This 177-nucleotide RNA was probed chemically with 2A3 and DMS.

[RMDB]
RNA sequence: GGGAACGACUCGAGUAGAGUCGAAAAGAUAUGGAAGAUGGAGAACGAGUACUCGUCAACAGCUCGGAAACGAGACAUGACGUGUACUCGACCAUCUUCCUAAGUCAAACCCAUGUUCGCAUGGGAACAAGAACGAGGAGUUCGCUCCUCGUUCUUGAAAAGAAACAACAACAACAAC
Reactivity to 2A3 in 0.01 (KOAc 150mM, MgCl2 10mM, bicine 150mM(pH8.5), 24C), signal-to-noise 2, nucleotides 027 to 126: g010a030u040a000u110g000g000a000a000g010a000u000g000g030a200g090a300a110c000g010a000g010u000a000c010u010c020g040u030c030a070a060c050a170g080c010u020c010g040g050a050a040a060c000g000a000g060a060c060a110u120g000a000c010g000u000g000u000a000c000u000c000g010a000c010c000a000u000c000u000u000c000c000u000a020a000g000u000c010a020a010a210c000c000c000a000u000g060u000u100c300g000c130a000u000g000g000g000a030a070
Reactivity to DMS in 0.01 (KOAc 150mM, MgCl2 10mM, bicine 150mM(pH8.5), 24C), signal-to-noise 3, nucleotides 027 to 126: g010a040u000a300u010g000g000a030a020g010a020u000g010g000a110g010a170a110c020g000a020g010u000a010c000u010c010g020u000c020a010a060c300a160g000c000u010c000g030g000a100a110a140c010g000a000g030a030c070a160u000g000a000c010g030u010g000u000a010c000u000c000g010a020c020c000a020u000c000u000u000c000c000u000a010a040g000u010c040a090a160a170c000c000c000a020u010g000u010u010c190g000c020a010u000g000g010g000a040a140
DMS adducts were read by reverse transcription with MarathonRT. The DMS profile rests on 1,974 reads. Values are in units of 0.01, from 0 to 300, in steps of 10. Conditions: 150 mM KOAc, 10 mM MgCl2 and 150 mM bicine (pH 8.5), 24 C. Values cover nucleotides 27 to 126. For 2A3, 3,508 sequencing reads were counted.